[RMDB]
RNA sequence: GGGAACGACUCGAGUAGAGUCGAAAACGCUGGGAAUGGAAUGUACGUCACCCUGCUAGUGCACCUAGCUGAAGCGCGCACGGCUAGGUGCACUUGGACCAGGCAAGUCGUACGAGAGAUUCCUGUGCUGAAGCGCGCACGGCAACCGAAAGGUGCGGAUUUACAUUAACUUCGGUUAAUGUAAAUCAAAAGAAACAACAACAACAAC
Reactivity to DMS in 0.01 (KOAc 150mM, MgCl2 10mM, bicine 150mM(pH8.5), 24C), signal-to-noise 3, nucleotides 027 to 156: c050g020c010u010g000g000g000a100a050u000g020g000a200a130u000g010u010a010c000g030u000c040a220c170c020c030u010g080c040u000a040g030u010g030c030a020c040c000u010a030g000c030u000g000a010a040g020c070g030c010g000c000a300c010g000g010c000u000a030g000g040u000g000c010a000c000u000u000g010g010a050c210c040a060g010g030c060a070a090g010u000c020g020u000a050c000g010a090g000a300g000a130u000u010c010c010u010g030u000g010c040u000g020a050a070g020c000g050c070g000c010a290c050g040g010c050a100a160c010c000g000a110a130a170g000g020u000g020c010g000
Reactivity to 2A3 in 0.01 (KOAc 150mM, MgCl2 10mM, bicine 150mM(pH8.5), 24C), signal-to-noise 4, nucleotides 027 to 156: c060g000c010u030g000g010g010a010a010u020g040g120a140a130u230g020u000a000c000g010u010c020a210c080c030c000u020g040c020u020a000g000u000g000c000a000c010c000u000a000g000c000u020g040a240a040g030c020g000c010g000c020a020c020g010g000c000u000a000g000g000u000g010c000a000c010u000u030g000g000a030c080c020a000g000g020c100a300a280g000u020c010g000u000a010c030g020a020g000a000g000a170u000u000c000c000u050g080u080g010c010u070g020a070a030g000c010g000c000g000c030a010c010g070g010c040a120a100c010c000g060a090a020a020g030g010u040g020c020g030